[RMDB]
RNA sequence: GGGAACGACUCGAGUAGAGUCGAAAACUAAGGGUCUUCGGACCCUUAGAAAUAACGGUCGGCUCAUGACGCUAGUCGUUCAUGCUGCUCGACCUAGACUAAAAAGGCUCAGGUUCGCCUGAGCCAAGACACUUAAACGCUUCGGCGUUUAAGUGUCAAAAGAAACAACAACAACAAC
Reactivity to DMS in 0.01 (KOAc 150mM, MgCl2 10mM, bicine 150mM(pH8.5), 24C), signal-to-noise 1, nucleotides 027 to 126: c010u000a010a000g030g010g010u020c000u000u010c220g000g010a020c000c000c000u000u010a000g000a090a050a090u030a060a100c270g000g000u000c000g010g010c000u040c000a000u000g000a000c050g000c030u000a110g030u000c000g000u000u000c000a010u000g000c200u000g010c010u020c000g060a020c010c010u000a010g010a240c100u020a020a050a040a120a080g010g020c000u000c000a030g010g010u000u010c300g000c010c000u000g020a010g030c000c000a000a020